This 177-nucleotide RNA was probed chemically with DMS. Values cover nucleotides 27 to 126.
[RMDB]
RNA sequence: GGGAACGACUCGAGUAGAGUCGAAAAGAAAAGCGAGUAAAAAGUCCUCAAAAUCGCAGAGGACGUCGCACUCGCAAAAGCUACGCGUCGGAGAUAGCGAAAAUCUCCAAUAAGUAGCAAAAAAAAACAAGUGACAUUAGUUCGCUAAUGUCACUUGAAAAGAAACAACAACAACAAC
Reactivity to DMS in 0.01 (KOAc 150mM, MgCl2 10mM, bicine 150mM(pH8.5), 24C), signal-to-noise 2, nucleotides 027 to 126: g000a170a070a140a180g000c000g000a030g000u010a010a110a050a120a220g000u010c000c000u000c000a100a060a140a160u010c230g010c300a040g020a010g010g000a020c010g000u020c190g020c290a020c020u000c000g000c000a070a020a070a120g020c000u000a000c000g000c230g010u000c020g000g000a000g000a060u000a000g020c250g020a050a120a080a000u000c000u000c000c000a000a000u000a040a230g000u000a000g000c000a000a010a000a000a000a060a060a060a090